[RMDB]
Chemical mapping of a 177-nucleotide RNA with DMS and 2A3. DMS adducts were read by reverse transcription with MarathonRT. Reactivities are given for positions 27 through 126. For 2A3 the reverse transcriptase was SuperScript II with manganese.
RNA sequence: GGGAACGACUCGAGUAGAGUCGAAAAGAUAUGGAUCAGUACAGCUUUUGACGGCUCCCAUGUCGGAAACGACAUGUGGAGCCGAUAAGCUGACUGAUCCUAAGUCAAAUCCCUGUUCGCAGGGAAAGAAGAUGAAAAGGUUCGCCUUUUCAUCUUCAAAAGAAACAACAACAACAAC
Reactivity to DMS in 0.01 (KOAc 150mM, MgCl2 10mM, bicine 150mM(pH8.5), 24C), signal-to-noise 2, nucleotides 027 to 126: g000a050u000a250u000g000g000a000u000c000a010g010u010a150c000a020g000c000u000u000u030u010g000a180c300g010g020c000u000c000c000c000a030u020g040u000c000g040g000a060a020a120c000g030a010c000a010u010g010u020g110g020a000g070c010c000g000a020u000a010a040g010c000u000g000a050c000u000g010a010u000c000c000u000a000a060g000u010c020a130a160a210u000c000c000c000u010g010u000u020c250g030c030a030g000g020g020a020a040a120
Reactivity to 2A3 in 0.01 (KOAc 150mM, MgCl2 10mM, bicine 150mM(pH8.5), 24C), signal-to-noise 1, nucleotides 027 to 126: g020a020u070a060u110g000g030a020u000c010a030g030u190a300c010a000g080c010u300u140u280u260g300a300c300g020g020c000u000c000c000c000a050u040g080u010c000g010g020a020a000a010c030g000a000c000a010u000g090u140g040g000a010g020c000c030g030a000u000a030a000g010c000u000g050a000c000u010g010a000u010c000c010u000a030a020g070u040c000a050a000a150u050c010c000c000u030g040u100u160c300g100c050a020g040g000g000a020a090a000

The reactions ran in a buffer of 150 mM KOAc, 10 mM MgCl2 and 150 mM bicine (pH 8.5), at 24 C.